This 170-nucleotide RNA was probed chemically with DMS and 2A3. Values cover nucleotides 27 to 129. Conditions: 150 mM KOAc, 10 mM MgCl2 and 150 mM bicine (pH 8.5), 24 C. It was measured as part of the RMDB library 15KLIB. In probing experiments dimethyl sulfate is read out at A N1 and C N3, which are open when not base-paired. 2A3 adducts were read by reverse transcription with SuperScript II with manganese.

[RMDB]
RNA sequence: GGGAACGACUCGAGUAGAGUCGAAAAGGUGUGAGAAAAGUUACAUAUGGUACUGCGCAUUGGUUGUUUGCGACCCUUGUCUCAACCUAUGUGAUAAUCUUACAAGCCACUAAAUUUACUUUGUGGAUAACCGCCUUCUUCGGAAGGCGGAAAAGAAACAACAACAACAAC
Reactivity to DMS in 0.01 (KOAc 150mM, MgCl2 10mM, bicine 150mM(pH8.5), 24C), signal-to-noise 3, nucleotides 027 to 129: g050g020u050g000u000g070a020g020a020a010a030a090g000u080u030a000c000a030u010a040u090g160g030u030a070c160u020g000c300g000c020a010u030u030g000g000u000u000g070u010u060u090g030c120g060a030c040c030c010u070u000g040u050c070u050c000a030a020c000c060u060a070u030g000u130g070a030u080a060a300u010c020u030u010a030c010a040a090g000c000c000a020c020u080a060a090a140u010u050u110a000c200u050u010u040g050u000g020g050a070u060a110a230
Reactivity to 2A3 in 0.01 (KOAc 150mM, MgCl2 10mM, bicine 150mM(pH8.5), 24C), signal-to-noise 3, nucleotides 027 to 129: g100g000u050g000u020g020a000g000a010a000a040a100g000u010u010a000c000a010u020a030u240g000g000u130a150c080u000g010c020g000c010a030u010u010g010g030u000u050g050u100u200u190g030c000g000a000c020c000c000u000u070g030u020c010u000c030a030a210c000c040u010a000u000g000u000g000a000u010a140a000u000c000u000u010a000c020a020a070g010c000c020a020c050u130a000a080a090u110u240u040a130c270u130u050u040g000u000g010g030a030u060a090a000